[RMDB]
RNA sequence: GGGAACGACUCGAGUAGAGUCGAAAAGAAAGAAAGAAAGAAAUCUGACAGAAUGACGGAUUCGAUCGUUGUGGUCGGCGGGCCACCACGUCAUUCCUUCGCACAGUCUCCGGGCAGACCGCCAUAAAAAAGCGGAUCUACUUCGGUAGAUCCGCAACUUUCUUAUUCGCUUCGGCGAAUAAGAAAGAAAAGAAACAACAACAACAAC
Reactivity to 2A3 in 0.01 (KOAc 150mM, MgCl2 10mM, bicine 150mM(pH8.5), 24C), signal-to-noise 1, nucleotides 027 to 156: g020a010a040a000g040a070a070a020g050a070a090a020g040a040a110a070u050c060u060g010a000c030a070g100a140a190u060g010a040c030g000g020a020u060u180c160g060a050u140c030g040u020u030g030u020g000g000u030c030g060g020c030g010g000g010c000c000a010c010c010a010c010g010u010c000a020u040u020c010c000u060u070c050g000c020a000c010a110g040u000c010u010c080c030g040g010g000c000a020g000a170c000c000g030c020c040a040u200a020a160a020a040a000a020g010c010g010g000a010u030c000u000a000c000u020u070c140g060g000u000a000g000a000u010c000c000g000c000a000a000